[RMDB]
RNA sequence: GGGAACGACUCGAGUAGAGUCGAAAAGAAAGAAAUCGAGAGACUAGCAAUAUCCGUAUUAGAUCGAAUAACUCGUUCUUGAUCUAACUGAGGGAUGAGUAAAGCGGAUUCUAGUCUAAUCGAGAAAGGGUAUCAUUGAGUUCGCUCAAUGAUACCCAAAAGAAACAACAACAACAAC
Reactivity to 2A3 in 0.01 (KOAc 150mM, MgCl2 10mM, bicine 150mM(pH8.5), 24C), signal-to-noise 2, nucleotides 027 to 126: g130a010a040a000g130a000a020a010u010c000g000a000g010a000g000a010c000u010a000g010c090a030a200u030a030u180c000c000g000u030a030u010u120a060g180a140u120c090g090a070a080u100a040a070c000u000c000g000u030u000c000u020u080g130a170u050c090u130a020a140c130u110g000a040g020g040g000a000u030g000a000g020u020a000a020a000g000c000g000g000a000u000u040c000u000a000g120u010c000u000a000a050u000c000g000a000g050a080a020a000
Reactivity to DMS in 0.01 (KOAc 150mM, MgCl2 10mM, bicine 150mM(pH8.5), 24C), signal-to-noise 1, nucleotides 027 to 126: g000a100a050a100g000a150a210a280u000c000g000a080g000a000g000a000c000u000a000g000c300a130a100u070a060u030c010c010g040u010a120u020u000a010g000a090u000c280g090a150a010u060a090a030c010u000c020g090u000u000c040u000u000g070a040u000c110u060a020a030c070u000g000a090g000g000g000a010u010g000a060g000u030a040a180a130g040c000g060g000a020u000u000c000u000a000g100u000c000u030a000a000u000c000g000a000g020a120a200a070
Chemical mapping of a 177-nucleotide RNA with 2A3 and DMS. DMS adducts were read by reverse transcription with MarathonRT. For 2A3, 1,946 sequencing reads were counted. The RNA was probed in 150 mM KOAc, 10 mM MgCl2 and 150 mM bicine (pH 8.5) at 24 C.